Record summary:
The record gives the reactivity of an RNA of 177 nucleotides to DMS and 2A3. Reactivities are given for positions 27 through 126. The 2A3 profile rests on 1,707 reads. Source: RMDB library OK2TRN, as collected in RNAgym. For DMS, 3,126 sequencing reads were counted. For 2A3 the reverse transcriptase was SuperScript II with manganese.
RNA sequence: GGGAACGACUCGAGUAGAGUCGAAAAGGAGGAGCUGGCCGCGUUUGAGCGCGCCGCCCUGCAGCUGUGCUCCAUUGCCGCCUUGGCAGGCCUGCCACAGGUGUGCAUACCAGUGAUAGUGCCGGGGCUUCAUGCACGAGUUCGCUCGUGCAUGAAGAAAAGAAACAACAACAACAAC
Reactivity to DMS in 0.01 (KOAc 150mM, MgCl2 10mM, bicine 150mM(pH8.5), 24C), signal-to-noise 2, nucleotides 027 to 126: g010g020a090g010g010a030g030c030u020g020g010c070c030g000c010g010u010u010u010g010a130g010c030g030c110g000c040c060g010c010c030c030u000g010c040a050g000c030u000g010u000g000c000u000c030c020a150u010u000g000c010c020g010c020c020u000u000g000g020c020a070g020g010c220c130u010g000c010c010a030c260a020g010g000u000g010u020g000c040a020u000a070c040c020a120g020u000g000a060u000a070g020u000g030c040c040g020g000g000g000
Reactivity to 2A3 in 0.01 (KOAc 150mM, MgCl2 10mM, bicine 150mM(pH8.5), 24C), signal-to-noise 2, nucleotides 027 to 126: g060g040a010g020g010a060g020c030u110g050g000c070c000g020c060g030u050u120u300g140a090g030c000g000c000g040c000c000g040c000c000c000u000g010c010a030g010c000u040g060u140g090c000u010c000c000a040u010u090g050c020c000g000c010c010u010u010g010g090c020a010g080g210c010c110u040g000c010c000a070c050a020g090g000u070g070u180g000c000a020u030a040c000c000a020g050u040g110a080u070a110g080u100g060c070c020g000g000g000g000